[RMDB]
RNA sequence: GGGAACGACUCGAGUAGAGUCGAAAAUUUUGUACUGGUUUAACUGAUUCAUGGAGUCCUUGAAAAGGGAGUUAGUUUUGUAUUUUACUAUUUCGUACCGAGAUCCGUCACAGGUGCCCCUAGCUGAUACACAAUAGAAAUUCGUUUCUAUUGUGUAAAAAGAAACAACAACAACAAC
Reactivity to 2A3 in 0.01 (KOAc 150mM, MgCl2 10mM, bicine 150mM(pH8.5), 24C), signal-to-noise 9, nucleotides 027 to 126: u060u060u030u120g040u040a040c040u040g060g040u030u060u080a070a030c010u020g040a060u070u070c030a030u110g070g020a040g070u060c010c000u040u030g080a050a060a030a050g030g020g010a020g020u020u050a020g000u000u020u060u120g100u030a150u020u100u040u050a040c030u020a080u050u050u060c050g020u020a050c010c030g030a030g010a090u030c020c010g030u030c030a020c010a080g070g020u030g040c000c000c000c000u010a040g020c030u030g020a020
Reactivity to DMS in 0.01 (KOAc 150mM, MgCl2 10mM, bicine 150mM(pH8.5), 24C), signal-to-noise 9, nucleotides 027 to 126: u010u020u010u010g010u010a070c050u000g010g010u010u010u010a060a090c050u000g010a090u010u000c030a080u010g010g010a100g010u010c050c020u010u000g010a060a060a120a090g010g010g010a070g010u000u000a040g010u000u000u010u000g010u010a050u010u010u000u010a060c040u010a070u000u010u000c060g010u010a080c040c020g000a130g010a050u000c030c040g000u000c060a050c080a080g010g010u000g010c030c010c010c040u000a070g010c050u000g000a260